The data come from the RNA Mapping Database (RMDB), library OK2TST. An RNA of 177 nucleotides, treated with 2A3 and DMS and read out base by base. 2A3 adducts were read by reverse transcription with SuperScript II with manganese. For 2A3, 641 sequencing reads were counted.

[RMDB]
RNA sequence: GGGAACGACUCGAGUAGAGUCGAAAAAGGCGUACGGGACUUUGGAGUAAAGAUGGUUUCACAUGUCACGGAGGGCGUAGGUAGUUUUCAGGUAUGCCCUGAUGCCAACGAGGAUUAUUUAAAGGCAAUCCUCAGGCAGUUUCGACUGCCUGAGGAUAAAAGAAACAACAACAACAAC
Reactivity to 2A3 in 0.01 (KOAc 150mM, MgCl2 10mM, bicine 150mM(pH8.5), 24C), signal-to-noise 1, nucleotides 027 to 126: a040g060g020c050g000u060a030c030g060g000g000a000c000u100u020u190g010g070a030g020u040a000a210a000g110a100u120g030g030u000u040u140c050a070c010a050u060g040u040c020a000c080g040g020a050g000g060g000c060g020u020a050g010g020u010a040g130u100u110u120u130c050a010g080g050u040a020u220g040c020c030c000u030g030a020u060g110c040c020a020a010c050g020a010g010g060a040u080u020a020u010u240u150a120a120a000g080g000c030a090
Reactivity to DMS in 0.01 (KOAc 150mM, MgCl2 10mM, bicine 150mM(pH8.5), 24C), signal-to-noise 1, nucleotides 027 to 126: a090g020g010c070g040u000a030c070g000g000g040a040c080u000u060u000g010g000a060g010u020a060a130a150g040a070u000g020g000u010u000u000c050a100c080a030u000g010u030c090a080c060g020g010a100g010g010g020c090g000u010a010g020g040u020a050g000u000u000u010u000c050a010g000g000u000a130u000g020c080c000c000u020g000a040u010g020c030c020a090a050c130g000a050g000g010a130u000u000a150u020u000u000a070a080a140g000g000c130a050
For DMS, 1,099 sequencing reads were counted.